RNA sequence: GGGAACGACUCGAGUAGAGUCGAAAAUAUCCAUCCCGCCGGGAACGGGAAGCGUAGCCUGUUUCUACUCUGCUCUUAUCUGGUUCCUCUUAUCUCCUUUGGAAUUUAAGUUGGUCCAGGUAAUGCGUGUAUAAUAGAGUUUCGACUCUAUUAUACAAAAAGAAACAACAACAACAAC
Reactivity to 2A3 in 0.01 (KOAc 150mM, MgCl2 10mM, bicine 150mM(pH8.5), 24C), signal-to-noise 9, nucleotides 027 to 126: u110a020u010c010c010a030u010c010c000c000g020c040c060g090g020g030a040a030c010g010g010g040a050a020g080c070g100u090a040g030c010c020u030g010u010u020u000c010u010a050c040u020c030u100g020c010u020c020u050u010a010u000c000u000g030g000u150u240c000c000u000c000u000u000a010u010c020u040c010c020u130u120u290g060g030a120a080u050u050u020a040a030g050u100u050g010g000u000c000c000a000g000g010u010a020a010u060g030c030g030
Reactivity to DMS in 0.01 (KOAc 150mM, MgCl2 10mM, bicine 150mM(pH8.5), 24C), signal-to-noise 8, nucleotides 027 to 126: u020a080u020c090c070a150u010c010c010c000g020c100c070g010g000g010a090a100c030g000g000g010a060a080g010c170g020u010a070g010c040c050u000g010u000u000u010c010u000a090c100u010c100u010g010c030u000c100u000u000a010u000c010u000g000g010u010u010c000c000u000c010u000u000a000u000c040u000c010c000u010u010u040g020g010a040a050u000u000u000a010a020g020u020u000g010g000u000c000c000a020g000g010u000a010a020u010g010c080g010

Background: The record gives the reactivity of an RNA of 177 nucleotides to 2A3 and DMS. Conditions: 150 mM KOAc, 10 mM MgCl2 and 150 mM bicine (pH 8.5), 24 C. Source: RMDB libraries RFM100 and RFMREP, as collected in RNAgym. Reactivities are rounded to 0.1 and cut off at 0 and 3. 2A3 adducts were read by reverse transcription with SuperScript II with manganese.